[RMDB]
RNA sequence: GGGAACGACUCGAGUAGAGUCGAAAAACACCACCUGGUGGAUCUUCUCCAACAACACGGACUGAUGCAAUGUUAGCAACACAUGUUAUCUGGGACAUAGGCCUGCAAUCCACUUGUAAACUUGUGGGCAGUUCAGUAGUUUCGACUACUGAACUGCAAAAGAAACAACAACAACAAC
Reactivity to DMS in 0.01 (KOAc 150mM, MgCl2 10mM, bicine 150mM(pH8.5), 24C), signal-to-noise 1, nucleotides 027 to 126: a020c090a130c090c000a300c030c100u040g030g000u000g000g000a000u020c080u000u000c080u030c020c020a120a150c080a040a050c160a050c110g030g000a060c110u040g000a080u000g000c100a060a030u020g050u000u000a140g020c030a050a070c050a030c130a000u000g010u050u000a140u010c030u020g000g000g000a110c250a000u000a090g100g000c000c020u000g000c080a050a010u000c040c030a020c000u000u000g020u000a120a020a070c120u000u030g000u060g020g000
Reactivity to 2A3 in 0.01 (KOAc 150mM, MgCl2 10mM, bicine 150mM(pH8.5), 24C), signal-to-noise 4, nucleotides 027 to 126: a020c090a040c040c000a070c020c070u140g010g040u030g020g050a060u010c060u060u030c020u000c010c000a080a070c030a040a030c040a040c050g090g040a020c040u090g030a080u050g020c040a090a100u110g050u180u100a060g040c040a050a060c050a010c020a080u080g020u090u060a060u040c020u070g010g010g060a040c030a100u080a080g020g030c010c010u030g000c020a010a040u010c000c020a040c000u050u000g050u140a070a200a180c070u030u090g010u020g020g040